[RMDB]
RNA sequence: GGGAACGACUCGAGUAGAGUCGAAAAGUACUAUGCCCGCCAUUAUUGAUGCAUGCUCCACCUCCCACUCCUUAAUAGUUGCUUUGAAGUUUCCUUUCGGUGGGUUCUGCACCGUCUUUAUCAGAAAGAAAUUAUUAUCCUUCGGGAUAAUAAUUUCAAAAGAAACAACAACAACAAC
Reactivity to DMS in 0.01 (KOAc 150mM, MgCl2 10mM, bicine 150mM(pH8.5), 24C), signal-to-noise 2, nucleotides 027 to 126: g000u010a080c110u000a070u010g020c020c030c020g040c060c040a070u000u000a060u010u010g010a090u000g010c030a060u010g010c030u010c020c020a080c040c040u000c010c000c020a110c070u010c030c020u010u010a070a090u010a060g010u000u000g020c020u000u010u000g000a050a190g000u000u000u000c020c010u010u010u000c040g020g040u000g020g010g000u000u010c060u010g000c000a020c030c020g010u010c060u000u000u010a070u000c100a070g000a020a060a110
Structure probing data (DMS) for a 177-nucleotide construct.
Source: RMDB library M2PK90, as collected in RNAgym.
Conditions: 150 mM KOAc, 10 mM MgCl2 and 150 mM bicine (pH 8.5), 24 C.
For DMS the reverse transcriptase was MarathonRT.